[RMDB]
RNA sequence: GGGAACGACUCGAGUAGAGUCGAAAAUCCUAAGUCUUCCGUGGUGAUCUAAGACAGACAAACAGAGGACCAUCGGAAACGAUGGUCCGACGAAGUUUGUUCGAGAUCACUGCGGAAGAUAUGGAAAAAUACGAUAUUCGUUCGCGAAUAUCGUAAACCUGUAGUGUACGUUCGCGUACACUACAGGAAAAGAAACAACAACAACAAC
Reactivity to DMS in 0.01 (KOAc 150mM, MgCl2 10mM, bicine 150mM(pH8.5), 24C), signal-to-noise 1, nucleotides 027 to 156: u000c000c000u010a110a220g010u000c000u000u000c010c000g060u000g000g000u010g020a000u000c000u030a090a030g000a120c010a010g040a000c020a020a150a180c050a070g020a300g000g000a010c000c000a040u000c000g000g000a300a180a130c000g050a060u010g000g000u000c000c000g000a020c150g030a110a250g030u000u000u000g020u010u000c030g000a070g040a020u000c000a000c000u000g010c020g030g000a000a010g000a000u010a020u000g030g020a000a080a100a060a230u000a010c030g030a000u000a040u010u000c000g000u000u020c300g020c030g000a030a000u000a020u000c010g000u030a000a080a220
Reactivity to 2A3 in 0.01 (KOAc 150mM, MgCl2 10mM, bicine 150mM(pH8.5), 24C), signal-to-noise 3, nucleotides 027 to 156: u030c010c000u030a110a030g020u000c000u000u000c000c000g010u010g000g000u000g010a000u010c010u040a090a040g040a050c020a020g020a010c000a010a280a010c010a090g040a040g010g010a010c000c010a010u000c000g050g050a110a030a040c010g000a000u010g000g000u000c000c000g000a000c000g000a040a020g000u000u000u000g070u090u060c030g010a010g000a010u000c000a000c000u000g000c000g000g000a000a000g000a000u000a000u010g000g020a020a040a000a010a020u050a010c000g000a000u020a010u020u110c010g020u100u140c220g000c010g160a000a000u020a000u010c000g010u020a050a000a010
Structure probing data (DMS and 2A3) for a 207-nucleotide construct. For 2A3, 5,376 sequencing reads were counted. Values cover nucleotides 27 to 156.